[RMDB]
RNA sequence: GGGAACGACUCGAGUAGAGUCGAAAAGCGUACUACACCGACGUAGUGAAGCAACAGCCCAAUAUUGGGUAAAUCCCAAAUAGGAUUUACCAGGUUGGGACAUGCUUCAUCAAGUCGGUGUAUCGCAAACGAAUUUCGAGUUCGCUCGAAAUUCGAAUCAAUAUAAAGAGUUCGCUCUUUAUAUUGAAAAAGAAACAACAACAACAAC
Reactivity to DMS in 0.01 (KOAc 150mM, MgCl2 10mM, bicine 150mM(pH8.5), 24C), signal-to-noise 2, nucleotides 027 to 156: g030c010g020u000a060c080u000a040c000a020c000c010g030a020c000g000u000a120g000u000g000a020a010g010c000a040a080c080a180g030c010c020c000a020a030u000a140u000u010g060g030g010u000a000a010a000u000c000c000c020a060a160a290u000a030g000g010a040u000u000u000a010c000c000a060g000g030u000u000g010g030g010a070c070a300u000g010c000u000u020c000a020u000c000a130a090g020u000c010g000g000u000g000u000a020u000c020g060c020a080a070a180c020g000a020a000u010u000u000c000g000a020g010u000u000c300g020c020u000c000g000a010a010a030u010u000c000g000a070a120
Reactivity to 2A3 in 0.01 (KOAc 150mM, MgCl2 10mM, bicine 150mM(pH8.5), 24C), signal-to-noise 5, nucleotides 027 to 156: g000c010g040u100a080c030u010a000c020a000c010c000g010a010c020g040u160a010g010u000g020a000a000g020c010a010a110c040a160g060c000c010c010a010a020u300a250u190u160g210g000g000u020a010a000a000u020c030c020c050a130a190a080u300a090g000g000a000u000u000u000a010c000c000a000g080g020u000u000g000g000g030a030c040a190u040g000c010u010u000c000a010u040c030a010a000g010u000c000g000g000u000g010u000a020u010c000g000c010a040a040a000c000g000a000a000u000u000u000c000g000a010g010u040u100c200g110c110u000c000g010a010a000a000u010u000c000g000a010a050
Source: RMDB library RNAMAK, as collected in RNAgym. This 207-nucleotide RNA was probed chemically with DMS and 2A3. For DMS the reverse transcriptase was MarathonRT. The RNA was probed in 150 mM KOAc, 10 mM MgCl2 and 150 mM bicine (pH 8.5) at 24 C.